[RMDB]
Source information: The record gives the reactivity of an RNA of 177 nucleotides to 2A3 and DMS. High DMS reactivity at an A or C suggests that its Watson-Crick edge is free. The data come from the RNA Mapping Database (RMDB), libraries RFM100 and RFMREP. The 2A3 profile rests on 2,980 reads. The RNA was probed in 150 mM KOAc, 10 mM MgCl2 and 150 mM bicine (pH 8.5) at 24 C.

RNA sequence: GGGAACGACUCGAGUAGAGUCGAAAAGCAACGAUGGCGCGCAGUUCGAGCACAGAGAUUGCGUUCUUAUAACGUUGGCUAUAAUAAACAUCUAUCUAUCCGUAGCGUCACAAUGUGUAAUUAACCGAGGAACCCUUAAUUUCGAUUAAGGGUUCCUAAAAGAAACAACAACAACAAC
Reactivity to 2A3 in 0.01 (KOAc 150mM, MgCl2 10mM, bicine 150mM(pH8.5), 24C), signal-to-noise 5, nucleotides 027 to 126: g040c010a000a020c070g080a090u020g020g010c020g000c010g010c050a010g010u000u090c020g050a070g060c030a020c040a070g110a010g010a050u030u120g020c000g030u000u030c040u080u220a250u050a090a020c020g020u000u040g140g010c070u050a000u040a190a090u100a020a160a000c060a090u050c040u080a070u000c010u020a040u010c040c040g070u050a060g020c010g020u020c030a010c000a070a160u080g020u020g000u030a010a070u120u120a100a040c020c070g000
Reactivity to DMS in 0.01 (KOAc 150mM, MgCl2 10mM, bicine 150mM(pH8.5), 24C), signal-to-noise 3, nucleotides 027 to 126: g010c010a050a060c140g000a100u010g030g000c020g000c010g000c040a080g000u000u000c090g000a060g030c110a080c150a050g010a100g000a020u030u000g020c050g000u010u000c070u000u000a020u060a100a130c050g030u000u030g020g020c050u000a020u000a040a040u020a110a080a100c100a040u010c050u010a050u050c080u000a050u000c020c010g010u000a080g000c060g000u020c050a040c060a090a060u000g000u000g030u020a040a060u000u040a150a100c050c050g000